The record gives the reactivity of an RNA of 177 nucleotides to 2A3 and DMS. 2A3 adducts were read by reverse transcription with SuperScript II with manganese. It was measured as part of the RMDB library TTRDEL.
RNA sequence: GGGAACGACUCGAGUAGAGUCGAAAAGAUAUGGAGUACCCGACGCACGCUAUCUCGGAAACGAGCCGAGGCGUGAACUACGUUAGGGUACUCCUAAGUCAAACCUCUCCACUUCGGUGGAGAGGAACUGAGAAAGACUCUUCGGAGUCUUUCUCAGAAAAGAAACAACAACAACAAC
Reactivity to 2A3 in 0.01 (KOAc 150mM, MgCl2 10mM, bicine 150mM(pH8.5), 24C), signal-to-noise 1, nucleotides 027 to 126: g040a030u080a090u170g060g000a000g000u010a000c000c030c010g010a020c000g000c060a000c000g050c000u090a160u300c010u000c000g050g080a250a300a180c130g070a050g190c130c050g140a080g030g030c010g000u000g010a010a000c090u230a030c080g000u000u150a300g030g000g000u010a000c010u000c000c000u000a020a000g010u000c010a000a020a190c000c000u000c000u010c000c000a010c010u050u160c250g050g000u010g000g000a010g000a000g010g010a010a000
Reactivity to DMS in 0.01 (KOAc 150mM, MgCl2 10mM, bicine 150mM(pH8.5), 24C), signal-to-noise 1, nucleotides 027 to 126: g000a040u030a300u010g010g030a010g010u000a000c020c010c000g040a020c030g000c010a000c020g030c000u000a180u000c030u010c020g000g010a130a130a240c090g050a100g050c300c100g000a040g010g010c020g010u000g000a050a020c130u040a300c000g000u000u000a110g090g010g040u000a000c000u000c000c000u000a000a060g020u010c040a080a080a060c010c010u000c000u000c000c000a000c000u010u000c160g030g030u000g000g000a000g000a000g000g000a000a030